[RMDB]
RNA sequence: GGGAACGACUCGAGUAGAGUCGAAAAGGCAGCCACCAGGAGAAAGCGGAGAAGUCACCUCCAGAGAAACCCUCUCCAACGAACAAAGAAGACCGCUGGGGCGCCAGGAAGAGUCCGUAGCGAUAGGUAAGAUCUGGGUUCGCCCAGAUCAAAAGAAACAACAACAACAAC
Reactivity to DMS in 0.01 (KOAc 150mM, MgCl2 10mM, bicine 150mM(pH8.5), 24C), signal-to-noise 5, nucleotides 027 to 129: g030g040c070a120g080c040c030a000c040c000a090g000g030a080g030a050a060a080g050c000g030g020a080g020a100a070g040u000c070a150c080c020u020c030c000a100g000a100g020a090a070a120c080c020c030u000c000u020c050c110a000a070c140g030a060a070c090a030a010a020g030a070a080g020a080c000c020g020c000u000g000g000g000g000c000g050c010c010a000g030g010a070a000g000a050g030u030c020c010g030u040a050g030c110g030a050u000a050g020g050u030a060a110
Reactivity to 2A3 in 0.01 (KOAc 150mM, MgCl2 10mM, bicine 150mM(pH8.5), 24C), signal-to-noise 7, nucleotides 027 to 129: g040g010c030a020g030c030c010a080c030c020a030g020g030a060g020a030a110a010g060c040g030g020a070g000a100a040g040u040c010a060c110c020u010c020c030a020g020a000g030a100a080a040c010c000c000u000c000u000c000c010a050a040c060g060a030a020c030a090a110a050g060a040a010g030a030c030c030g000c040u010g010g000g000g040c010g010c000c000a010g030g010a030a020g010a010g050u010c020c020g030u040a000g000c030g040a060u090a060g040g040u060a100a040